[RMDB]
RNA sequence: GGGAACGACUCGAGUAGAGUCGAAAAUACACAUGAGGCAUAAUCUGAGAUAGUUUUGUCUGAAAACGCUUUUGGAAUUAGUACAGUGUCAGUCAGAGAAGAAUCACAAAAACUACAGCCAACAUUUAAAACAGGAUAAUGCUUUAUUUAAGCCAAGGGUAUGAGGUAAAUUCGUUUACCUCAUACCAAAAGAAACAACAACAACAAC
Reactivity to DMS in 0.01 (KOAc 150mM, MgCl2 10mM, bicine 150mM(pH8.5), 24C), signal-to-noise 2, nucleotides 027 to 156: u000a080c040a100c170a050u010g020a070g010g000c050a090u000a070a180u000c030u000g000a140g030a110u000a090g020u000u000u000u010g030u000c030u010g000a070a100a080a110c100g020c050u000u000u000u000g010g010a090a130u010u000a080g040u000a070c000a070g020u000g000u010c070a080g000u000c060a050g000a110g010a080a070g010a130a090u000c030a050c040a040a040a050a040a050c020u000a040c060a040g000c050c050a040a080c040a050u000u010u000a020a040a060a100c040a070g010g010a090u000a060a120u000g000c010u000u010u000a070u020u000u000a060a070g030c010c010a050a190g010
Reactivity to 2A3 in 0.01 (KOAc 150mM, MgCl2 10mM, bicine 150mM(pH8.5), 24C), signal-to-noise 2, nucleotides 027 to 156: u130a020c030a000c020a070u030g030a010g020g000c010a040u010a070a040u090c040u040g020a050g020a130u060a050g010u010u020u030u060g020u000c030u030g020a050a010a040a020c040g000c000u090u100u070u090g050g050a120a050u100u050a080g020u020a020c030a070g010u010g040u080c010a050g010u010c010a000g020a000g040a150a020g020a040a040u120c020a020c060a110a060a020a070a030c020u060a030c010a000g000c030c000a060a020c020a110u100u180u210a020a080a010a010c030a020g050g000a010u040a060a040u080g000c000u040u040u070a080u080u140u100a090a000g030c010c000a030a010g080
About this RNA: Chemical mapping of a 207-nucleotide RNA with DMS and 2A3. 2A3 adducts were read by reverse transcription with SuperScript II with manganese. DMS adducts were read by reverse transcription with MarathonRT. DMS (dimethyl sulfate) methylates the pairing face of unpaired adenines and cytosines. Conditions: 150 mM KOAc, 10 mM MgCl2 and 150 mM bicine (pH 8.5), 24 C.